Record summary: Conditions: 150 mM KOAc, 10 mM MgCl2 and 150 mM bicine (pH 8.5), 24 C. The record gives the reactivity of an RNA of 177 nucleotides to 2A3 and DMS.
[RMDB]
RNA sequence: GGGAACGACUCGAGUAGAGUCGAAAAUCAAGUCAUUACCAUCCUUAUUCAAUGCAGGUAAUAAACUGUGUACCUGUGACUUGUAACCAGUCAUCCUUUGUAUUCUGUCAUAUCUCCAACAACACUACUCUGUACUUGAUUUCGAUCAAGUACAGAGAAAAGAAACAACAACAACAAC
Reactivity to 2A3 in 0.01 (KOAc 150mM, MgCl2 10mM, bicine 150mM(pH8.5), 24C), signal-to-noise 7, nucleotides 027 to 126: u060c010a020a010g040u010c010a040u030u140a070c020c010a040u110c010c020u160u140a150u160u150c070a060a090u200g050c020a020g020g060u080a070a060u120a110a200a050c110u140g040u040g030u200a040c000c020u040g010u020g030a010c000u030u030g030u040a030a070c020c000a000g040u040c010a040u050c000c010u030u050u080g060u050a090u060u070c030u020g050u030c020a020u020a050u100c010u000c030c000a030a040c010a020a010c010a040c040u120a060
Reactivity to DMS in 0.01 (KOAc 150mM, MgCl2 10mM, bicine 150mM(pH8.5), 24C), signal-to-noise 5, nucleotides 027 to 126: u010c040a040a030g010u010c040a070u000u000a070c050c050a100u000c050c070u010u000a090u020u010c140a090a090u000g010c050a020g010g020u010a040a080u000a060a070a110c140u010g010u010g030u000a060c130c030u000g010u000g010a030c040u000u010g000u000a090a110c080c040a050g010u000c070a090u000c020c050u000u000u000g010u000a060u000u000c040u000g000u010c030a070u000a060u000c020u000c020c030a040a060c090a040a020c070a090c170u010a110
For DMS the reverse transcriptase was MarathonRT. The 2A3 profile rests on 8,494 reads. The data come from the RNA Mapping Database (RMDB), library OK2TST.